[RMDB]
RNA sequence: GGGAACGACUCGAGUAGAGUCGAAAAUAAGUAAGACUACCCGCUGAACUUAAGCAUAUCAGUAAGCGGAGGAAAAGAAACUAACAAGGAUUCCGUCAGUAACGGCGAGUGAAGACGGAGUAGCCCAUCAGUAAUAAAGGUUCGCCUUUAUUACUGAAAAAGAAACAACAACAACAAC
Reactivity to 2A3 in 0.01 (KOAc 150mM, MgCl2 10mM, bicine 150mM(pH8.5), 24C), signal-to-noise 4, nucleotides 027 to 126: u130a020a020g050u020a060a020g030a070c020u020a050c010c000c000g000c000u010g010a070a060c010u050u100a100a020g120c030a120u080a060u280c020a020g000u010a020a000g000c010g010g020a070g080g020a060a080a000a030g050a040a070a000c040u070a040a020c050a070a050g060g010a030u030u020c000c010g000u000c010a010g020u030a010a010c010g110g020c200g100a030g010u010g020a040a020g090a020c000g000g010a000g000u000a010g030c000c000c000a060
Reactivity to DMS in 0.01 (KOAc 150mM, MgCl2 10mM, bicine 150mM(pH8.5), 24C), signal-to-noise 6, nucleotides 027 to 126: u010a060a090g000u010a090a070g020a180c040u000a130c060c000c000g000c010u000g010a110a130c070u010u000a040a170g040c250a130u000a030u010c050a070g010u000a080a030g010c000g000g010a100g010g000a060a060a080a080g010a140a070a030c040u010a050a070c150a080a100g000g010a050u000u000c000c010g020u000c010a040g000u020a140a020c020g010g040c190g000a180g000u000g000a150a090g000a020c010g010g000a020g030u000a080g010c010c020c010a180